[RMDB]
RNA sequence: GGGAACGACUCGAGUAGAGUCGAAAAUGCGAUGUACCGCACCCACAAGCUGUUGGAUUGGUUCAAUGACAGCGAUCUGCCAAUCAUGAUGAGGGUUUUGAAUGCGGGCUGCGACCACAUCAUGCGAACGCAUAGCCUAUUUCGAUAGGCUAUGCGUAAAAGAAACAACAACAACAAC
Reactivity to 2A3 in 0.01 (KOAc 150mM, MgCl2 10mM, bicine 150mM(pH8.5), 24C), signal-to-noise 6, nucleotides 027 to 126: u090g000c010g040a030u060g140u220a080c120c000g010c030a060c000c010c000a060c020a020a080g050c020u040g080u100u130g090g060a160u090u060g080g090u140u130c080a080a100u190g040a020c030a020g050c060g020a190u030c040u120g030c020c020a080a130u110c010a050u060g060a030u030g020a220g060g020g000u030u030u110u170g210a200a080u160g020c040g040g060g000c080u060g010c020g000a000c000c030a020c000a030u040c000a030u130g050c040g050a030
Reactivity to DMS in 0.01 (KOAc 150mM, MgCl2 10mM, bicine 150mM(pH8.5), 24C), signal-to-noise 3, nucleotides 027 to 126: u030g000c060g000a120u020g020u040a120c150c020g000c010a110c000c000c000a100c250a170a160g000c070u020g010u000u010g000g000a120u000u000g000g040u000u000c060a120a040u000g000a040c090a070g000c110g000a120u030c070u010g000c080c060a060a070u070c030a020u010g020a010u040g000a230g000g010g000u000u030u000u050g000a080a110u010g000c020g010g000g020c060u000g000c030g000a050c030c020a030c000a000u000c000a040u010g000c210g000a070
The data come from the RNA Mapping Database (RMDB), library OK1LIB. Structure probing data (2A3 and DMS) for a 177-nucleotide construct. Values cover nucleotides 27 to 126. For 2A3, 3,421 sequencing reads were counted.